[RMDB]
RNA sequence: GGGAACGACUCGAGUAGAGUCGAAAAGUACUGGAGCCUGCCCGACGUGGUCAAACCGCCUAUCACGUUCCGGGACAGCCAGCUGUUUGAUCAGCUGCCCGUGGUGGCGGCCGAACUGAUGCCGGUUCGCGCUCGCACGUUCUACAACACGCAAGCCCCCACCACUUGCAUUCGUGCAAGUGGUGGGAAAAGAAACAACAACAACAAC
Reactivity to 2A3 in 0.01 (KOAc 150mM, MgCl2 10mM, bicine 150mM(pH8.5), 24C), signal-to-noise 2, nucleotides 027 to 156: g060u070a080c050u070g040g000a040g000c040c020u050g000c000c020c010g000a000c010g000u030g000g040u120c140a060a020a130c070c080g010c030c050u120a050u050c010a000c010g030u060u140c080c090g020g000g060a120c010a030g050c000c000a010g010c020u050g140u070u140u170g270a300u160c010a000g010c000u030g000c050c000c000g020u030g000g110u080g020g030c010g000g060c000c000g020a010a010c000u040g070a200u270g290c200c060g000g000u010u000c040g000c030g020c050u130c090g050c030a030c030g010u040u030c060u060a090c030a210a000c040a040c110g110c070a120a040g050c050c000